RNA sequence: GGGAACGACUCGAGUAGAGUCGAAAACUUAUCACCACGGUGCUCUUAUGAAUCCACAGGAACCUGGUUCAACAGAUGAUUCUCAAGCAGCAGGUUCAUCUCAAGCAGAUAGUUCAAAUAAAGUAGCGAUUAAUCCCAGUUUCGACUGGGAUUAAUCAAAAGAAACAACAACAACAAC
Reactivity to DMS in 0.01 (KOAc 150mM, MgCl2 10mM, bicine 150mM(pH8.5), 24C), signal-to-noise 4, nucleotides 027 to 126: c130u010u020a040u010c050a090c030c020a060c130g030g020u000g010c030u010c020u010u010a060u050g000a040a110u010c030c020a120c100a100g050g000a040a040c040c060u010g020g020u010u000c070a100a120c160a090g020a090u000g020a100u010u000c050u000c070a130a200g010c150a080g000c040a010g000g010u000u000c020a030u010c020u010c080a060a080g040c090a020g000a020u030a050g000u010u040c090a050a070a070u030a030a110a090g010u010a050g010c240
Reactivity to 2A3 in 0.01 (KOAc 150mM, MgCl2 10mM, bicine 150mM(pH8.5), 24C), signal-to-noise 6, nucleotides 027 to 126: c020u050u080a040u100c010a020c060c000a030c080g060g000u060g030c010u030c020u100u110a090u130g080a070a070u060c040c020a060c030a090g120g020a010a010c000c010u050g060g060u120u110c050a110a100c000a070g060a050u070g030a060u260u000c050u020c060a110a120g040c060a010g020c020a000g090g000u020u030c010a040u000c020u010c020a090a100g030c000a010g060a140u100a040g090u050u090c030a080a090a040u120a100a140a020g080u080a060g110c050
An RNA of 177 nucleotides, treated with DMS and 2A3 and read out base by base. The 2A3 profile rests on 4,596 reads.